Chemical mapping of a 177-nucleotide RNA with 2A3 and DMS. Conditions: 150 mM KOAc, 10 mM MgCl2 and 150 mM bicine (pH 8.5), 24 C.

RNA sequence: GGGAACGACUCGAGUAGAGUCGAAAACACAUCAGGAGCGAUAGCGGUGAAUUAUUCGUGGUUUUGUCGAUUCGGCAUAGUGGCGAUAACUGAAUGCCGGAUCGGUACUGCAGGUGUUUAAACACACUAACCGAACUCAUUUCGAUGAGUUCGGUUAAAAAGAAACAACAACAACAAC
Reactivity to 2A3 in 0.01 (KOAc 150mM, MgCl2 10mM, bicine 150mM(pH8.5), 24C), signal-to-noise 5, nucleotides 027 to 126: c070a000c000a050u110c020a010g030g020a030g030c040g020a040u030a090g030c040g010g110u070g080a130a080u180u060a050u070u090c020g010u070g080g010u080u010u100u100g030u030c000g000a010u010u000c000g000g000c010a000u020a060g100u050g110g070c110g140a090u090a200a030c000u030g150a110a030u000g000c000c000g000g000a000u000c010g000g000u010a000c000u040g000c020a040g080g000u010g070u030u100u090a040a140a020c100a000c010a010c070
Reactivity to DMS in 0.01 (KOAc 150mM, MgCl2 10mM, bicine 150mM(pH8.5), 24C), signal-to-noise 4, nucleotides 027 to 126: c050a100c100a080u000c090a050g000g000a140g000c060g020a050u000a030g020c040g000g020u020g000a090a100u030u010a080u030u010c030g020u010g000g020u000u030u020u000g030u000c000g000a030u000u010c000g000g030c000a010u000a050g020u010g010g010c170g020a130u070a090a130c020u000g030a100a010u010g000c010c000g000g000a000u000c000g000g000u000a030c120u000g000c080a070g030g000u010g000u010u000u000a060a080a130c160a050c070a050c090
Reactivities are given for positions 27 through 126.